Conditions: 150 mM KOAc, 10 mM MgCl2 and 150 mM bicine (pH 8.5), 24 C. Structure probing data (DMS and 2A3) for a 207-nucleotide construct. It was measured as part of the RMDB library OK3TST. High 2A3 reactivity points to a flexible backbone, as in loops and unpaired stretches.
[RMDB]
RNA sequence: GGGAACGACUCGAGUAGAGUCGAAAACAGGCAGGCUGAGUCCGAAAAAGGAGUCAGCAAAGGGUGGUGGAUUAUCAUUAGUUCUUAUAGGUUUUGGGAUAGGCAGUGGAGUUACGAGCAAUGUUUUGUGGGCAGGAGGUGGAUCUCACAAAGUACAAGCCACUAAUAAUUUCGAUUAUUAGUGGCUAAAAGAAACAACAACAACAAC
Reactivity to DMS in 0.01 (KOAc 150mM, MgCl2 10mM, bicine 150mM(pH8.5), 24C), signal-to-noise 2, nucleotides 027 to 156: c080a100g030g010c060a090g010g030c010u030g000a090g010u000c020c020g010a040a090a130a150a200g000g010a040g020u000c020a030g000c020a080a060a090g030g000g020u000g010g010u010g020g010a080u000u000a090u010c060a100u000u000a070g010u000u000c030u000u010a110u010a120g010g010u000u000u000u000g010g030g010a090u010a060g010g030c020a080g030u020g030g010a080g010u010u000a060c070g020a090g000c030a070a090u010g030u020u000u000u000g020u000g040g020g020c050a080g020g020a050g040g020u010g010g000a050u010c020u010c030a110c040a010a050a080g050u000a080c080a090
Reactivity to 2A3 in 0.01 (KOAc 150mM, MgCl2 10mM, bicine 150mM(pH8.5), 24C), signal-to-noise 3, nucleotides 027 to 156: c020a010g040g070c020a030g030g000c040u000g010a040g130u020c010c020g070a130a040a010a030a080g030g000a010g130u030c000a000g000c000a020a050a010g010g000g010u030g010g030u060g000g040a060u050u070a020u130c080a020u030u060a020g030u060u060c030u040u160a140u070a160g000g050u050u020u090u150g020g010g010a030u050a040g060g040c080a020g020u050g040g020a060g020u040u050a020c030g020a010g030c020a040a060u100g020u050u060u040u070g030u020g020g020g010c050a000g010g030a020g000g000u020g020g010a030u010c010u020c010a050c000a020a070a010g040u040a060c030a080

DMS adducts were read by reverse transcription with MarathonRT.